[RMDB]
An RNA of 177 nucleotides, treated with DMS and 2A3 and read out base by base. For DMS the reverse transcriptase was MarathonRT. Reactivities are given for positions 27 through 126. The 2A3 profile rests on 5,991 reads. The data come from the RNA Mapping Database (RMDB), library TTRDEL.
RNA sequence: GGGAACGACUCGAGUAGAGUCGAAAAGAUAUGGACUAUGAAGGUACACUCUAAGACAGGAGGUCGGAAACGACCUCUCGAGAGUGUUACUGGAGUCCUAAGUCAAACCCUCUCUUCGGAGAGGGAAUCUCUUAUGAGAGUUCGCUCUCAUAAGAGAAAAAGAAACAACAACAACAAC
Reactivity to DMS in 0.01 (KOAc 150mM, MgCl2 10mM, bicine 150mM(pH8.5), 24C), signal-to-noise 4, nucleotides 027 to 126: g030a070u000a300u000g000g000a000c010u000a240u000g000a150a160g000g000u000a030c000a000c000u010c000u000a140a070g010a190c300a130g000g010a010g010g000u000c000g000g000a090a090a160c010g010a010c000c000u000c000u000c020g000a020g000a010g020u010g010u000u000a000c000u010g000g010a020g000u000c000c000u000a040a050g000u010c040a090a150a170c000c000c000u000c000u000c010u000u010c220g000g000a020g000a010g000g000g000a020a010
Reactivity to 2A3 in 0.01 (KOAc 150mM, MgCl2 10mM, bicine 150mM(pH8.5), 24C), signal-to-noise 3, nucleotides 027 to 126: g010a010u080a060u180g000g010a020c010u050a250u300g040a030a010g000g000u000a000c000a010c000u020c000u070a260a150g110a130c080a080g060g000a010g010g000u010c000g020g010a040a060a030c000g000a000c000c010u000c010u000c000g000a000g000a000g000u000g000u050u040a010c010u010g000g010a000g010u010c000c010u010a140a010g060u030c030a050a020a300c000c010c000u000c000u010c010u040u120c300g190g010a010g000a000g000g000g010a010a040